[RMDB]
RNA sequence: GGGAACGACUCGAGUAGAGUCGAAAACACAGGACCAGGCCAGCUCCAGAUUCCCGAGGAAGGGGUUGGGCUAGCCAGUUCUGGUGAGGUGCCUAGUACUGGGCCUCUCAACUGUGAGAUCCUGUGGUGGACACAGGCGGGAUGGGAUCCACUGGGAUAGGUCCUUUUAGUUCGCUAAAAGGACCUAAAAAGAAACAACAACAACAAC
Reactivity to 2A3 in 0.01 (KOAc 150mM, MgCl2 10mM, bicine 150mM(pH8.5), 24C), signal-to-noise 2, nucleotides 027 to 156: c090a000c000a000g010g000a020c000c050a060g030g000c030c010a020g000c010u120c060c000a060g040a220u300u270c020c000c020g040a150g140g230a120a160g010g010g000g010u000u010g000g000g000c010u010a010g010c000c040a000g000u000u000c020u040g050g040u030g020a020g080g080u160g010c000c000u060a060g040u080a070c160u090g000g030g030c040c000u010c000u000c010a030a130c020u040g070u020g130a130g020a150u050c000c030u040g000u060g040g100u070g060g010a010c020a000c010a080g060g000c070g000g000g030a050u050g010g000g020a010u040c020c070a030c040u080g120g000g010a030